[RMDB]
RNA sequence: GGGAACGACUCGAGUAGAGUCGAAAAUGCCAGGGUGGUGCACAGGUAUCGUAGGAUGGUAUACGGGUAUGCUGGGGUGGUGCCCAAGUGGACUAGGAUGACAUCCAGGUAUGCUGGGAUGAUGCACUGGUGCACUAGAAUGAACCCUGGGAUGCUAGUAUACGGUAUGGUUCGCCAUACCGUAUACAAAAGAAACAACAACAACAAC
Reactivity to DMS in 0.01 (KOAc 150mM, MgCl2 10mM, bicine 150mM(pH8.5), 24C), signal-to-noise 2, nucleotides 027 to 156: u020g020c000c010a040g010g040g040u020g010g020u000g030c010a050c050a050g020g040u000a020u000c040g050u000a150g020g010a080u020g030g030u000a040u010a060c110g020g050g030u000a030u010g020c040u000g020g000g040g050u000g020g000u010g000c020c010c010a070a110g010u000g030g000a080c030u000a130g010g020a090u020g030a080c000a300u000c010c020a130g010g020u000a030u000g050c030u000g010g030g010a080u000g010a040u010g010c030a130c020u000g000g040u000g000c000a020c010u000a070g000a100a160u010g000a140a170c010c000c000u040g010g000g000a070u000g000c050u010a260
Reactivity to 2A3 in 0.01 (KOAc 150mM, MgCl2 10mM, bicine 150mM(pH8.5), 24C), signal-to-noise 3, nucleotides 027 to 156: u110g050c000c000a010g000g010g000u050g000g000u010g020c010a020c000a000g020g020u000a000u010c020g040u060a050g080g100a090u100g020g030u070a050u020a050c030g020g030g000u060a030u120g080c060u070g000g010g020g010u020g010g010u100g040c000c000c010a030a030g050u090g040g030a020c030u070a060g070g010a060u050g030a030c010a040u040c000c000a020g030g080u050a040u040g050c010u020g030g040g010a030u080g000a000u010g000c030a070c300u060g080g080u020g000c000a000c000u020a030g130a050a080u160g040a010a030c000c000c010u020g010g000g000a010u070g020c010u000a030

Annotation:
This 207-nucleotide RNA was probed chemically with DMS and 2A3. DMS adducts were read by reverse transcription with MarathonRT. Source: RMDB library OK3TST, as collected in RNAgym. The RNA was probed in 150 mM KOAc, 10 mM MgCl2 and 150 mM bicine (pH 8.5) at 24 C. 2A3 adducts were read by reverse transcription with SuperScript II with manganese.